[RMDB]
RNA sequence: GGGAACGACUCGAGUAGAGUCGAAAAGAAGUCCGACACGCUGUCGCGGGGCGAUUUAGCACCUUUCCCGGGAAAGGGCCCGGUGAGAUUUACGCACAUUUAUUAGAUCAGUGCCGAUCUAAAGAAAAGUACGAUACUGAUUCGUCAGUAUCGUACUAAAAGAAACAACAACAACAAC
Reactivity to 2A3 in 0.01 (KOAc 150mM, MgCl2 10mM, bicine 150mM(pH8.5), 24C), signal-to-noise 2, nucleotides 027 to 126: g090a100a010g040u010c030c020g020a030c040a010c090g080c060u100g030u120c020g020c040g040g000g000g030c030g000a010u020u060u180a040g010c020a080c000c000u010u080u050c000c010c000g040g020g010a130a110a050g050g020g030c000c010c000g040g000u100g020a060g000a020u070u080u150a070c070g070c030a020c010a090u050u130u160a140u090u110a050g000a030u050c030a030g080u030g270c050c040g020a000u000c030u050a050a090a020g080a010a070a010
Reactivity to DMS in 0.01 (KOAc 150mM, MgCl2 10mM, bicine 150mM(pH8.5), 24C), signal-to-noise 4, nucleotides 027 to 126: g000a140a140g000u000c030c000g010a120c060a090c080g010c100u010g020u000c110g020c110g000g000g020g010c030g000a100u010u010u000a100g030c040a140c030c030u000u010u000c050c000c030g000g000g010a100a100a120g000g000g010c030c050c040g000g000u000g000a070g000a110u000u010u000a080c110g020c050a050c140a070u000u000u000a100u030u000a020g000a020u000c040a110g010u000g010c110c100g000a020u010c000u010a010a040a190g000a040a070a070

Annotation
Source: RMDB library OK2TRN, as collected in RNAgym. Structure probing data (2A3 and DMS) for a 177-nucleotide construct. For DMS the reverse transcriptase was MarathonRT. The RNA was probed in 150 mM KOAc, 10 mM MgCl2 and 150 mM bicine (pH 8.5) at 24 C.